[RMDB]
RNA sequence: GGGAACGACUCGAGUAGAGUCGAAAAACACCCGCUUUAUUCACUGGGGACGACAACUCUGGGGAGAGAAGGGAGGAUCGGAUGGGAAGAGUAUAUCCUACGGGAAUCCGCGUUCCCCCCUCACGUCGAUACAUAGUUAGUUCGCUAACUAUGUAUCAAAAGAAACAACAACAACAAC
Reactivity to 2A3 in 0.01 (KOAc 150mM, MgCl2 10mM, bicine 150mM(pH8.5), 24C), signal-to-noise 9, nucleotides 027 to 126: a000c060a100c020c020c010g010c050u200u230u120a250u160u180c090a050c170u080g000g000g000g040a030c040g030a030c040a130a070c040u010c040u080g030g000g040g020a090g010a010g020a050a070g070g010g010a040g020g010a040u060c030g020g060a080u100g070g010g020a060a040g050a040g200u060a040u030a030u110c010c000u010a040c030g030g000g020a040a090u020c020c020g030c010g040u020u020c000c000c000c000c000c000u030c010a090c060g150u100c080
Reactivity to DMS in 0.01 (KOAc 150mM, MgCl2 10mM, bicine 150mM(pH8.5), 24C), signal-to-noise 8, nucleotides 027 to 126: a100c230a140c010c000c010g010c150u010u020u010a060u010u000c100a060c090u010g000g000g010g000a080c050g010a050c120a070a100c040u000c040u000g000g010g000g010a080g000a080g010a070a070g010g010g010a080g000g000a150u010c040g010g010a070u010g010g010g000a050a090g010a140g010u000a080u000a070u000c010c010u000a110c050g010g010g000a210a080u000c030c020g010c060g000u000u000c000c000c000c000c000c000u000c030a080c240g010u000c140